RNA sequence: GGGAACGACUCGAGUAGAGUCGAAAAGAUAUGGAUGGGAGCGAUAAGCUCGUGUCGGAAACGACAUAGAGCUUUUGACGCUUAGUCCUAAGUCAAACCAAUGGCAGCGUUCGCGCUGCCAUUGGAACCGCUAUAGAUUGUUCGCAAUCUAUAGCGGAAAAGAAACAACAACAACAAC
Reactivity to DMS in 0.01 (KOAc 150mM, MgCl2 10mM, bicine 150mM(pH8.5), 24C), signal-to-noise 1, nucleotides 027 to 126: g000a080u000a300u000g000g000a000u000g000g000g000a010g030c000g020a060u000a040a000g000c010u010c000g020u000g000u000c000g000g000a070a100a150c000g000a020c000a000u000a060g000a010g000c000u010u000u010u030g020a220c030g000c010u000u000a300g010u000c000c000u010a060a190g000u000c000a070a140a190c020c000a000a020u000g000g000c000a040g020c010g030u000u010c220g010c030g000c020u000g000c000c000a000u030u000g000g000a000a080
Reactivity to 2A3 in 0.01 (KOAc 150mM, MgCl2 10mM, bicine 150mM(pH8.5), 24C), signal-to-noise 2, nucleotides 027 to 126: g030a020u100a020u170g020g010a010u040g300g300g070a030g000c000g030a070u000a220a000g000c000u000c010g010u000g000u000c010g010g020a070a050a060c000g010a010c000a010u050a120g000a000g020c000u000u060u050u110g130a060c040g000c000u000u010a000g000u000c010c000u000a170a000g030u030c060a150a090a080c000c020a010a020u020g030g040c020a000g000c080g010u130u180c260g000c000g060c140u020g000c060c000a000u000u000g000g000a000a020